[RMDB]
RNA sequence: GGGAACGACUCGAGUAGAGUCGAAAAGAGUAACGGUUUUCCUAAAUCGUCGUGAGACGGACCUUGGAGAACCUCGUAUUAAAAUAACAAGGUCCAAAUGAAGCGUAGAGAGAUAAGACUACGCAAAAAUACCCUGACUAUUCGUAGUCAGGGUAUUAAAAGAAACAACAACAACAAC
Reactivity to DMS in 0.01 (KOAc 150mM, MgCl2 10mM, bicine 150mM(pH8.5), 24C), signal-to-noise 6, nucleotides 027 to 126: g010a150g010u020a080a080c120g010g000u000u000u030u010c020c010u000a030a040a030u010c000g020u000c010g000u050g020a210g000a020c020g000g000a010c020c020u000u000g010g000a030g000a010a030c030c020u010c150g000u010a080u040u040a080a080a140a110u030a120a140c170a140a020g000g020u000c020c080a060a100a090u040g000a120a100g010c000g020u000a000g000a100g020a140g010a170u030a090a150g010a100c000u000a000c010g020c000a000a030a060
Reactivity to 2A3 in 0.01 (KOAc 150mM, MgCl2 10mM, bicine 150mM(pH8.5), 24C), signal-to-noise 7, nucleotides 027 to 126: g090a030g060u190a100a040c090g000g020u000u000u020u060c010c000u010a010a020a020u060c020g020u010c020g070u050g190a120g000a030c020g000g010a000c010c000u000u020g020g010a030g010a030a010c010c010u010c000g030u020a110u050u260a140a080a030a090u190a110a040c090a040a000g020g000u020c030c040a030a060a100u260g040a160a050g000c000g000u010a010g030a010g020a000g030a100u120a280a030g020a030c000u000a000c000g000c000a060a000a000
Background:
An RNA of 177 nucleotides, treated with DMS and 2A3 and read out base by base. DMS adducts were read by reverse transcription with MarathonRT. The data come from the RNA Mapping Database (RMDB), library OK1LIB. Values cover nucleotides 27 to 126. Conditions: 150 mM KOAc, 10 mM MgCl2 and 150 mM bicine (pH 8.5), 24 C. 2A3 adducts were read by reverse transcription with SuperScript II with manganese. The 2A3 profile rests on 10,074 reads.